[RMDB]
RNA sequence: GGGAACGACUCGAGUAGAGUCGAAAAACUCUUGCUCAAAUGAGUAUUCCAAAGAGAUGCAGAAUGCUAUGGUUUGUUAAUCCGUAGAAUAUUCUUGUGUUUCUGUGUAUCAGUUUGGAAGUGCAUCUGCUUCUGAGAUGCUCAUUUGGGCAAAGAAGUAGGAUAGUUUCUUCGGAAACUAUCCUACAAAAGAAACAACAACAACAAC
Reactivity to 2A3 in 0.01 (KOAc 150mM, MgCl2 10mM, bicine 150mM(pH8.5), 24C), signal-to-noise 6, nucleotides 027 to 156: a000c020u020c010u010u010g000c000u010c000a000a000a000u010g000a000g000u020a050u120u100c020c010a020a050a010g010a000g000a000u010g010c000a010g020a070a030u040g020c000u000a020u010g020g090u050u120u180g180u150u240a140a070u050c000c010g000u010a010g040a100a090u070a040u140u040c070u100u110g050u020g040u060u060u020c030u010g050u020g060u090a110u170c040a070g080u070u180u160g060g020a060a030g020u020g070c030a060u030c030u200g150c010u060u030c040u040g100a150g000a100u000g000c010u000c000a000u000u000u000g000g000g000c000a000a000a000g000a040a010
Reactivity to DMS in 0.01 (KOAc 150mM, MgCl2 10mM, bicine 150mM(pH8.5), 24C), signal-to-noise 2, nucleotides 027 to 156: a060c050u000c050u000u000g020c020u000c020a010a030a010u000g010a060g050u000a040u000u000c060c020a080a060a030g010a040g000a040u000g010c010a050g020a040a020u000g030c000u000a010u000g020g010u000u000u000g020u010u000a130a100u000c000c010g020u000a010g010a070a100u000a040u000u010c030u000u020g050u000g030u000u000u000c010u000g000u020g020u000a160u010c120a170g010u010u000u000g030g010a050a050g030u000g020c170a140u010c130u010g000c030u010u000c040u000g010a040g010a060u000g020c000u000c000a070u000u000u000g010g000g000c000a000a020a020g000a070a220